RNA sequence: GGGAACGACUCGAGUAGAGUCGAAAAAUACAUCCAUUCAUACACGAUAGAACGUGACGUCCUCAAACACAAAGCCAAGACCCUGAAAAACAACCACAAUCUGGAAAAGUGCCUGGCGUUCAUCCUCGGACUCAGUAGUGUUAUUCUCGCUGGAGUCGAUACUAGUCGUAUUCGUACGACUAGUAUCAAAAGAAACAACAACAACAAC
Reactivity to DMS in 0.01 (KOAc 150mM, MgCl2 10mM, bicine 150mM(pH8.5), 24C), signal-to-noise 3, nucleotides 027 to 156: a100u010a070c070a100u000c030c010a150u010u000c040a130u010a150c080a100c040g010a180u000a120g010a090a110c050g030u010g020a080c060g010u010c020c020u000c050a080a100a090c060a110c090a060a070a150g000c030c020a060a070g020a100c010c040c020u000g000a050a070a020a140a100c040a060a160c010c020a020c040a040a120u000c050u000g010g010a060a080a090a070g030u000g020c030c050u000g020g000c030g030u000u010c040a110u000c020c020u010c030g020g000a050c020u000c020a040g040u000a090g020u010g010u000u000a100u010u010c010u000c010g020c030u000g020g000a130g040u000c080
Reactivity to 2A3 in 0.01 (KOAc 150mM, MgCl2 10mM, bicine 150mM(pH8.5), 24C), signal-to-noise 8, nucleotides 027 to 156: a000u110a030c050a040u040c040c010a040u070u140c040a020u100a120c020a010c060g070a070u060a180g110a150a050c050g020u030g060a050c040g060u030c010c030u050c030a060a090a020c040a010c020a070a060a010g020c010c010a030a010g020a050c000c020c010u030g060a070a030a020a050a040c030a040a020c010c020a020c030a080a110u040c040u070g030g000a080a080a030a010g030u020g010c010c010u010g010g010c020g030u050u040c020a040u040c010c020u030c060g040g010a010c010u010c020a040g030u120a040g010u050g050u100u120a100u150u060c040u010c030g020c020u040g050g030a010g030u030c050